[RMDB]
RNA sequence: GGGAACGACUCGAGUAGAGUCGAAAAUUCAUCAUGACCGUUACAUUUUGAGGUUAUAAAGUUCAAUUGCAACACAUAGACUAAGGUUUACAUGGUGAAGCGAUGGUGAAAAACAAAAGAUGAAUCUCCAGGAGAAGAUAUUCGUAUCUUCUCCUGGAAAAGAAACAACAACAACAAC
Reactivity to DMS in 0.01 (KOAc 150mM, MgCl2 10mM, bicine 150mM(pH8.5), 24C), signal-to-noise 2, nucleotides 027 to 126: u000u010c050a020u020c000a060u020g000a040c060c010g010u000u000a090c120a220u000u000u000u000g010a130g020g010u000u000a140u010a150a070a100g000u050u000c000a120a030u010u000g070c000a010a220c020a030c090a180u000a010g000a010c060u010a070a210g060g000u010u000u060a110c270a080u000g000g010u020g000a000a300g010c030g000a040u010g030g000u000g000a030a050a100a040a040c060a040a030a020a080g030a030u020g010a040a030u050c110u000
Reactivity to 2A3 in 0.01 (KOAc 150mM, MgCl2 10mM, bicine 150mM(pH8.5), 24C), signal-to-noise 6, nucleotides 027 to 126: u000u010c000a000u010c000a010u050g010a020c010c020g110u140u180a110c060a240u080u110u150u300g160a080g080g000u030u070a100u100a150a140a030g080u040u060c040a050a040u050u040g020c020a030a020c010a000c010a050u050a020g070a030c020u030a040a200g090g000u000u030u050a050c040a050u130g060g010u020g020a030a010g020c010g030a020u040g060g150u120g060a070a020a030a010a000c080a010a090a000a010g030a010u040g010a010a040u010c020u000
This 177-nucleotide RNA was probed chemically with DMS and 2A3.
For DMS the reverse transcriptase was MarathonRT.
2A3 adducts were read by reverse transcription with SuperScript II with manganese.
It was measured as part of the RMDB libraries RFM100 and RFMREP.
The RNA was probed in 150 mM KOAc, 10 mM MgCl2 and 150 mM bicine (pH 8.5) at 24 C.